[RMDB]
RNA sequence: GGGAACGACUCGAGUAGAGUCGAAAAUGAAUGUAUCCGUGAAUAUCGACAGGAUUUUGGCCGUGGCAGCUCGGCUGAUCGAAAGUCAGCAUUAUGCGGCCCAGCACAUUAAAACGCUGGCUCAACGUGUGGCUAUACGGUUCGCCGUAUAGCCACAAAAAGAAACAACAACAACAAC
Reactivity to DMS in 0.01 (KOAc 150mM, MgCl2 10mM, bicine 150mM(pH8.5), 24C), signal-to-noise 2, nucleotides 027 to 126: u030g000a050a070u020g000u010a080u000c040c010g020u000g040a060a120u020a130u010c070g030a050c050a080g000g000a140u000u000u000u000g020g000c030c010g000u010g000g020c110a040g040c030u000c270g010g000c000u000g000a000u020c040g000a170a140a180g000u000c010a060g040c060a150u000u000a070u000g040c010g000g000c100c020c010a050g050c010a050c080a070u000u000a030a090a120a160c140g000c010u000g020g000c080u000c050a050a100c180g010
Reactivity to 2A3 in 0.01 (KOAc 150mM, MgCl2 10mM, bicine 150mM(pH8.5), 24C), signal-to-noise 1, nucleotides 027 to 126: u040g110a050a010u100g030u060a030u070c080c030g030u070g070a070a030u270a140u180c050g050a000c020a050g010g030a040u000u210u060u170g050g000c000c000g030u040g050g000c050a020g030c010u050c070g030g040c010u010g000a030u040c080g130a120a000a000g000u000c010a000g030c020a020u030u080a050u190g060c020g020g000c010c000c000a000g000c020a010c020a100u170u140a010a150a080a040c070g020c020u000g000g040c000u030c030a060a020c030g080

The record gives the reactivity of an RNA of 177 nucleotides to DMS and 2A3.
It was measured as part of the RMDB library OK2TRN.
Conditions: 150 mM KOAc, 10 mM MgCl2 and 150 mM bicine (pH 8.5), 24 C.
2A3 adducts were read by reverse transcription with SuperScript II with manganese.